[RMDB]
RNA sequence: GGGAACGACUCGAGUAGAGUCGAAAAGAUAUGGACACUCCCCACCGCACCAUAGGCGAAGAACCUACCAUACUUUCGGAAACGAAAGUAUGGUAGGGGAGCCUACAUUUGCGAGGUGUCCUAAGUCCACACUAUGCAAGUUCGCUUGCAUAGUGUGAAAAGAAACAACAACAACAAC
Reactivity to 2A3 in 0.01 (KOAc 150mM, MgCl2 10mM, bicine 150mM(pH8.5), 24C), signal-to-noise 2, nucleotides 027 to 126: g050a080u220a120u300g000g010a010c000a020c060u210c070c000c020c030a040c010c030g000c000a060c060c020a140u100a040g020g010c000g290a300a010g020a020a060c020c010u000a000c020c010a010u000a000c000u000u010u000c000g030g040a110a060a070c020g010a000a000a000g000u000a000u000g000g020u000a000g010g000g000g000a010g010c000c000u000a010c050a120u180u160u070g010c000g030a020g000g020u000g010u000c000c000u000a160a050g140u070c090
Reactivity to DMS in 0.01 (KOAc 150mM, MgCl2 10mM, bicine 150mM(pH8.5), 24C), signal-to-noise 3, nucleotides 027 to 126: g000a110u010a160u000g020g020a030c000a020c000u010c060c040c000c010a300c200c030g030c020a050c300c300a210u000a010g000g010c000g000a140a150g000a150a160c000c000u000a000c000c000a030u000a010c000u000u000u000c000g020g000a080a130a260c000g000a000a000a000g010u000a000u000g000g000u000a000g000g000g000g000a080g000c000c000u000a020c120a300u000u000u010g020c030g030a110g030g010u000g000u000c040c000u010a070a100g000u000c070